[RMDB]
RNA sequence: GGGAACGACUCGAGUAGAGUCGAAAAGUGCAAGGAGAAAGUCACAGUCUAGUUUUAUGAAGACCAAACUAGAGAAAAUCGAGUUAUCUUAAAGUGUAUGACAUCUCCACAAAUGAAUGUUUAUGGCUUUACACUUGGAGUGUUCUUGGAACACUCACCCCACCCUACUGUUCGCAGUAGGGUGGGGAAAAGAAACAACAACAACAAC
Reactivity to 2A3 in 0.01 (KOAc 150mM, MgCl2 10mM, bicine 150mM(pH8.5), 24C), signal-to-noise 2, nucleotides 027 to 156: g090u120g040c040a050a070g000g030a010g020a040a100a010g020u020c020a010c060a050g030u010c010u020a050g020u050u000u020u030a150u140g160a180a030g040a000c050c030a000a050a000c000u000a000g000a020g010a040a130a020a060u160c090g020a050g040u080u030a090u070c010u000u150a070a010a020g000u020g000u010a030u080g010a010c020a030u000c010u000c080c010a020c000a070a020a020u220g070a060a060u070g040u050u230u230a040u120g000g000c010u010u060u060a010c040a000c060u030u110g150g000a000g000u000g010u040u000c060u070u090g080g030a000a000c000a000c020u000c000a030

Overview:
Chemical mapping of a 207-nucleotide RNA with 2A3. The reactions ran in a buffer of 150 mM KOAc, 10 mM MgCl2 and 150 mM bicine (pH 8.5), at 24 C. For 2A3 the reverse transcriptase was SuperScript II with manganese.